[RMDB]
About this RNA
Chemical mapping of a 177-nucleotide RNA with 2A3 and DMS.
RNA sequence: GGGAACGACUCGAGUAGAGUCGAAAAGAAGAGCAGGCAGAUAAUCUUGUGCAGUAUGCAUGCUCAUAUCUCCACAAGAAGUAAGGCAGCAAAAGAAUAACUGCCACUGCACAAGUGGAGCCGCAGAAAUCAGUCCUCAUUUCGAUGAGGACUGAUUAAAAGAAACAACAACAACAAC
Reactivity to 2A3 in 0.01 (KOAc 150mM, MgCl2 10mM, bicine 150mM(pH8.5), 24C), signal-to-noise 4, nucleotides 027 to 126: g120a060a000g010a010g000c030a020g040g000c010a000g060a200u160a170a060u140c000u020u020g010u030g010c000a000g010u050a060u180g040c020a010u030g000c000u000c000a010u040a030u040c050u000c020c010a080c020a060a090g090a070a010g120u220a030a080g000g010c010a010g000c050a030a000a170a070g200a110a180u120a080a020c010u000g000c000c000a010c000u000g000c000a000c010a020a000g000u010g000g040a030g010c030c050g050c060a020g100a050
Reactivity to DMS in 0.01 (KOAc 150mM, MgCl2 10mM, bicine 150mM(pH8.5), 24C), signal-to-noise 4, nucleotides 027 to 126: g020a100a100g000a020g000c020a010g000g000c000a080g030a140u070a070a080u030c010u000u020g000u010g010c040a020g000u000a040u050g010c060a010u000g000c000u000c030a060u050a080u020c040u010c020c040a150c190a100a130g020a090a060g020u000a070a060g010g000c000a000g000c220a060a110a120a100g000a140a090u010a110a220c000u010g000c000c010a150c010u000g000c000a010c020a030a050g000u000g000g010a040g010c030c080g020c170a070g000a100
2A3 adducts were read by reverse transcription with SuperScript II with manganese.
For 2A3, 4,096 sequencing reads were counted.
Values cover nucleotides 27 to 126.